This 207-nucleotide RNA was probed chemically with DMS and 2A3. As a SHAPE reagent, 2A3 marks flexible, mostly unpaired nucleotides at the ribose 2'-OH. The reactions ran in a buffer of 150 mM KOAc, 10 mM MgCl2 and 150 mM bicine (pH 8.5), at 24 C.

RNA sequence: GGGAACGACUCGAGUAGAGUCGAAAACCUGUUAUCUGACCAAUAACAGAAUGCACCACAGCGUAAAAUCAUCUGUUUGGGUGAGUUGGUCGCACCGCCAUUUGACGAACGAACGCCAAGCCUAAGCACUACGAGUAUGUGUUCGCACAUACUCGAACAGUAUAGGCUGAUUCGUCAGCCUAUACUGAAAAGAAACAACAACAACAAC
Reactivity to DMS in 0.01 (KOAc 150mM, MgCl2 10mM, bicine 150mM(pH8.5), 24C), signal-to-noise 3, nucleotides 027 to 156: c100c000u010g000u000u000a010u020c030u010g010a070c100c060a300a030u010a020a030c010a010g010a140a140u000g000c080a100c030c050a060c120a110g000c050g040u000a050a070a120a090u000c040a070u000c010u000g020u000u000u000g000g020g000u000g010a290g010u000u020g020g000u010c010g000c010a030c010c030g000c060c030a250u000u010u010g010a040c010g000a120a060c070g020a070a050c020g030c050c030a050a160g040c050c020u010a060a080g020c060a090c000u010a130c010g010a020g030u000a010u000g010u000g030u000u000c300g070c000a010c000a010u000a000c000u000c010g010a030a060
Reactivity to 2A3 in 0.01 (KOAc 150mM, MgCl2 10mM, bicine 150mM(pH8.5), 24C), signal-to-noise 9, nucleotides 027 to 156: c010c000u000g000u000u010a020u010c010u010g020a010c010c000a020a010u010a010a010c000a000g060a080a110u160g030c040a040c040c030a050c040a020g030c030g050u090a060a090a080a090u070c040a030u000c050u120g150u140u160u140g170g000g000u010g010a030g010u020u060g020g000u010c020g020c020a010c000c010g050c030c010a100u090u070u120g060a050c040g020a160a020c040g020a050a030c030g030c010c020a060a060g020c030c030u130a090a020g060c050a060c130u150a070c070g000a000g010u000a000u000g010u000g000u020u070c110g040c030a000c000a000u000a000c010u000c000g000a010a010